[RMDB]
RNA sequence: GGGAACGACUCGAGUAGAGUCGAAAAUACACACACAUUCUAGAUCCUCAUACAGGGAAGCCCCUAGAACUACAUGACUACCCCAUAAUCUCGGCUACUGUUAUUCACCCUAGUUGUGCGUAUGCUGAGAAAACGCGUAUUUCGAUACGCGUUUUCUAAAAGAAACAACAACAACAAC
Reactivity to DMS in 0.01 (KOAc 150mM, MgCl2 10mM, bicine 150mM(pH8.5), 24C), signal-to-noise 2, nucleotides 027 to 126: u020a090c050a040c040a080c100a080c090a120u000u000c060u000a090g000a090u020c050c030u000c110a110u010a090c140a090g020g010g010a070a100g010c050c040c020c020u010a090g010a060a080c050u000a060c080a040u000g020a080c020u000a160c060c020c000c050a040u000a080a060u000c040u000c050g000g040c010u000a050c050u000g010u000u000a090u000u000c040a130c020c040c040u000a100g020u000u020g000u000g000c060g030u000a010u000g010c030u000g000